The data come from the RNA Mapping Database (RMDB), library RNAMAK.
The record gives the reactivity of an RNA of 207 nucleotides to 2A3.
The reactions ran in a buffer of 150 mM KOAc, 10 mM MgCl2 and 150 mM bicine (pH 8.5), at 24 C.
For 2A3, 899 sequencing reads were counted.
[RMDB]
RNA sequence: GGGAACGACUCGAGUAGAGUCGAAAAUGUACGAUUCGUCGUACAAAAAAAACCUUUGUGAUUCGUACAACUCCUUGGAUUUAGCUCUCCCAUUGGGAGAGCUUGUCAGGAGCUGUACGAGAUCACUCUGGUAAAAAGCAGAGGUUCGCCUCUGCAACAAUUGUCAACCCUUCGGGGUUGACAAUUGAAAAGAAACAACAACAACAAC
Reactivity to 2A3 in 0.01 (KOAc 150mM, MgCl2 10mM, bicine 150mM(pH8.5), 24C), signal-to-noise 1, nucleotides 027 to 156: u100g000u000a010c000g020a030u020u090c230g090u000c010g030u120a040c000a010a010a000a000a010a000a020a030c000c000u000u040u000g000u000g000a000u010u010c000g000u000a010c000a040a030c000u010c020c000u040u120g160g010a060u300u240u030a010g000c000u000c000u000c000c000c070a200u130u270g000g000g000a000g000a000g000c010u000u010g000u000c000a000g000g020a000g030c000u000g010u000a000c000g000a000g010a000u000c000a000c000u000c000u000g020g050u080a080a110a050a040a000g030c010a000g000a000g000g050u100u100c210g110c020c030u010c000u050g000c000a000a000